[RMDB]
RNA sequence: GGGAACGACUCGAGUAGAGUCGAAAAGCAGGGUGCGAUUGAAAUAAUCAAUGGGGGUACCAACUUGCAAAAGAGCGUGUUCCCAAUCUCGGACCGCUAGGGCGCGCUCGUAGGGAUUGAGUGGGAAUCCAUUGCAUUAGUUCGCUAAUGCAAUGGAAAAAGAAACAACAACAACAAC
Reactivity to 2A3 in 0.01 (KOAc 150mM, MgCl2 10mM, bicine 150mM(pH8.5), 24C), signal-to-noise 2, nucleotides 027 to 126: g040c050a030g050g050g050u110g080c040g040a010u030u090g040a060a110a120u260a050a100u140c030a040a070u070g030g000g000g040g000u010a010c000c020a010a090c060u030u120g020c030a050a000a080a000g010a000g000c010g020u030g020u120u130c030c000c000a000a030u060c050u050c060g100g050a070c010c000g030c090u070a080g000g000g000c020g010c010g020c000u000c010g040u060a040g020g000g060a090u080u160g030a010g030u080g020g020g000a010a030
Reactivity to DMS in 0.01 (KOAc 150mM, MgCl2 10mM, bicine 150mM(pH8.5), 24C), signal-to-noise 5, nucleotides 027 to 126: g020c070a070g010g000g010u000g000c140g010a080u010u010g010a070a100a110u010a070a090u010c030a050a090u010g020g000g000g010g020u010a110c110c070a060a080c100u010u000g010c130a060a070a120a140g000a020g010c030g030u000g000u000u000c000c000c020a060a070u010c110u010c100g000g010a070c080c060g000c100u000a170g000g000g010c040g010c020g000c020u000c020g020u000a060g000g000g000a100u000u000g000a110g020u000g000g000g000a110a170
An RNA of 177 nucleotides, treated with 2A3 and DMS and read out base by base. The RNA was probed in 150 mM KOAc, 10 mM MgCl2 and 150 mM bicine (pH 8.5) at 24 C. Source: RMDB library OK2TST, as collected in RNAgym. For DMS, 5,291 sequencing reads were counted.